[RMDB]
RNA sequence: GGGAACGACUCGAGUAGAGUCGAAAACGGGGUUGGAUCCGACUCUCAUAGGCUCUGCAACCCAACUCCUACUCAAUACGUCCUCGUCGUACAGAACGGUAACAUGUUUUCCGAACAUCCGCGCUUGCAAACCUGCCAAAGUUCGCUUUGGCAGGAAGGUGUUAAUUUGAUUCGUCAAAUUAACACCAAAAGAAACAACAACAACAAC
Reactivity to 2A3 in 0.01 (KOAc 150mM, MgCl2 10mM, bicine 150mM(pH8.5), 24C), signal-to-noise 4, nucleotides 027 to 156: c080g030g010g000g010u030u010g070g160a090u300c030c000g070a090c040u070c020u000c110a130u160a170g000g000c000u010c010u020g000c010a020a030c010c010c000a020a020c010u000c010c010u010a010c020u020c070a060a120u070a150c020g040u030c020c010u020c020g090u040c020g000u070a050c030a090g050a120a040c000g010g000u070a080a020c070a160u110g030u050u060u040u020c020c060g050a040a020c010a070u030c010c020g040c020g010c050u040u100g000c040a080a050a090c000c000u000g000c000c000a020a000a000g010u040u060c110g020c090u000u000u000g000g000c000a000g000g000a000a010
Reactivity to DMS in 0.01 (KOAc 150mM, MgCl2 10mM, bicine 150mM(pH8.5), 24C), signal-to-noise 1, nucleotides 027 to 156: c090g010g020g020g030u010u000g000g000a100u000c050c040g010a070c110u000c090u000c080a160u000a200g030g010c010u000c040u000g030c030a060a070c050c030c050a070a070c020u020c030c020u000a160c060u000c070a070a130u000a070c050g020u000c000c010u000c020g050u000c030g020u010a100c050a090g020a100a110c040g000g010u010a040a080c060a150u010g020u000u000u000u060c040c050g000a020a050c000a080u000c000c000g000c080g030c080u000u000g010c030a130a060a180c020c000u000g040c000c000a030a010a030g010u000u000c300g020c000u000u010u000g010g000c010a000g000g000a010a010